The record gives the reactivity of an RNA of 207 nucleotides to DMS and 2A3. Values cover nucleotides 27 to 156. Reactivities are rounded to 0.1 and cut off at 0 and 3. DMS adducts were read by reverse transcription with MarathonRT. The data come from the RNA Mapping Database (RMDB), library RNAMAK.
RNA sequence: GGGAACGACUCGAGUAGAGUCGAAAAGGGGUCAGAUCAUCGCAUGAGGGAUAGACAUGCUCUGAAGCCUCCACGGAGCAACAGCUAUCCUACCCACCAUGCGGUCUGACGGAGGCACCCAAACCUCUGACGUAUUCUUCGGAAUACGUCAGAGGAAGGAAUACUAAAUGUUCGCAUUUAGUAUUCCAAAAGAAACAACAACAACAAC
Reactivity to DMS in 0.01 (KOAc 150mM, MgCl2 10mM, bicine 150mM(pH8.5), 24C), signal-to-noise 4, nucleotides 027 to 156: g020g000g030g030u000c010a060g010a070u000c030a270u000c060g000c030a020u000g010a250g040g000g010a050u000a030g000a060c050a300u000g010c000u020c000u000g010a040a160g020c020c000u000c010c030a300c030g010g010a030g060c000a090a060c070a120g010c010u000a020u000c010c000u000a040c040c000c020a300c070c010a050u000g000c000g010g010u000c000u010g010a050c000g020g030a040g070g000c000a080c000c020c010a040a060a100c000c000u010c010u000g010a020c020g000u000a010u010u000c000u000u030c300g020g010a040a000u000a010c000g020u000c000a010g000a000g010g000a010a040
Reactivity to 2A3 in 0.01 (KOAc 150mM, MgCl2 10mM, bicine 150mM(pH8.5), 24C), signal-to-noise 9, nucleotides 027 to 156: g100g000g020g010u010c010a000g000a030u040c030a030u190c220g010c010a000u000g020a050g020g030g000a000u010a000g030a070c100a140u220g000c000u000c000u010g050a100a030g010c000c000u000c000c000a020c000g000g000a000g010c030a050a070c060a100g100c000u000a000u000c000c000u030a080c050c070c010a060c030c000a000u000g000c010g010g000u000c000u010g010a020c030g000g000a000g000g000c000a030c000c000c010a050a090a130c000c000u000c000u000g000a000c000g000u000a010u010u000c010u030u050c270g130g000a000a000u000a000c000g000u000c000a000g000a000g000g000a000a000